[RMDB]
The record gives the reactivity of an RNA of 177 nucleotides to DMS.
RNA sequence: GGGAACGACUCGAGUAGAGUCGAAAAGGAGUAUGGCAGGUCGGCCGCCUGCUGGGCCCGGCGCCUGGUCUUCGUCAACGGGCACGGCGGCAAUGUCGGCGCUUUGACCCGAGCGGUAGGCCUGCUGCCGAUACUCGGUGUUCGCACCGAGUAUCGGAAAAGAAACAACAACAACAAC
Reactivity to DMS in 0.01 (KOAc 150mM, MgCl2 10mM, bicine 150mM(pH8.5), 24C), signal-to-noise 1, nucleotides 027 to 126: g020g000a170g010u010a060u020g010g010c000a010g000g000u000c050g010g030c010c040g000c000c040u020g040c040u000g000g030g000c020c030c150g000g000c170g020c060c000u000g030g010u000c050u000u000c050g050u000c070a140a230c040g010g000g040c140a020c040g000g000c080g010g010c070a140a130u030g010u000c050g010g000c080g000c070u000u020u000g010a070c060c010c000g000a070g020c000g010g030u000a090g040g000c000c010u010g000c000u000g010
Description:
The RNA was probed in 150 mM KOAc, 10 mM MgCl2 and 150 mM bicine (pH 8.5) at 24 C. For DMS the reverse transcriptase was MarathonRT.